Structure probing data (2A3 and DMS) for a 177-nucleotide construct.
RNA sequence: GGGAACGACUCGAGUAGAGUCGAAAAACGCCUUUUCCUCUAUGGCUAUGAAAGCGUGGACAACGGAGAUCAAAUAGACCAAUUACUGAAUAUGGCUUUUGACAUAUCUUCUUCUUCAUGGGUGAGGGGAUACAAGGAUGUUCGCAUCCUUGUAUCCAAAAGAAACAACAACAACAAC
Reactivity to 2A3 in 0.01 (KOAc 150mM, MgCl2 10mM, bicine 150mM(pH8.5), 24C), signal-to-noise 2, nucleotides 027 to 126: a010c020g050c000c000u020u030u030u010c010c000u030c020u030a090u160g080g000c010u000a090u140g130a230a040a010g070c060g060u020g020g020a020c000a070a030c050g030g020a040g000a080u010c020a020a030a070u120a090g100a180c010c000a010a030u120u040a130c080u180g130a090a060u180a100u100g000g050c000u030u030u000u060g020a020c020a060u090a020u030c030u050u000c000u040u000c010u000u020c030a030u050g050g100g000u090g050a010g000g080
Reactivity to DMS in 0.01 (KOAc 150mM, MgCl2 10mM, bicine 150mM(pH8.5), 24C), signal-to-noise 2, nucleotides 027 to 126: a040c150g010c030c040u000u000u000u030c020c000u000c090u000a070u000g000g030c030u000a100u000g010a060a080a070g030c120g010u000g020g000a060c080a100a130c170g010g000a020g020a040u020c030a040a080a020u000a070g010a090c060c050a020a110u000u010a190c200u000g000a070a030u000a100u000g000g000c000u010u000u000u000g010a040c170a110u000a040u020c000u000u000c040u000u000c090u010u020c090a050u000g020g010g010u010g020a130g000g030
The RNA was probed in 150 mM KOAc, 10 mM MgCl2 and 150 mM bicine (pH 8.5) at 24 C.
For DMS the reverse transcriptase was MarathonRT.
As a SHAPE reagent, 2A3 marks flexible, mostly unpaired nucleotides at the ribose 2'-OH.